[RMDB]
Notes:
Conditions: 150 mM KOAc, 10 mM MgCl2 and 150 mM bicine (pH 8.5), 24 C. The record gives the reactivity of an RNA of 207 nucleotides to 2A3. The data come from the RNA Mapping Database (RMDB), library OK3TST. For 2A3 the reverse transcriptase was SuperScript II with manganese.
RNA sequence: GGGAACGACUCGAGUAGAGUCGAAAAAGGGAUGAAACCAGGGCCUGUGGAUGGGUGGGAGAGGAAGUAUCUUAUUGACUCCACAUCUAACUUGUGUACCCAUGCAUAGAGCUUGAAGGGAACUCAGUUUGGAGGGGAAAGAUUUCAAUGACAUGUACAUGGACGUAAUGUUCGCAUUACGUCCAUGAAAAGAAACAACAACAACAAC
Reactivity to 2A3 in 0.01 (KOAc 150mM, MgCl2 10mM, bicine 150mM(pH8.5), 24C), signal-to-noise 1, nucleotides 027 to 156: a010g140g010g000a040u090g050a010a050a000c080c110a110g000g010g080c040c090u140g000u050g020g110a100u070g000g020g080u100g130g000g020a100g010a030g070g000a000a060g050u040a030u060c070u130u160a270u010u090g040a030c000u000c000c010a010c010a100u130c020u090a000a110c050u070u050g010u010g000u100a060c000c010c010a030u040g000c050a100u100a210g130a000g000c010u090u130g000a040a040g000g020g000a010a010c000u000c050a010g010u000u050u130g000g000a070g040g000g020g000a000a030a160g010a170u070u120u010c050a020a020u130g010a020c010a100u010g000u000a000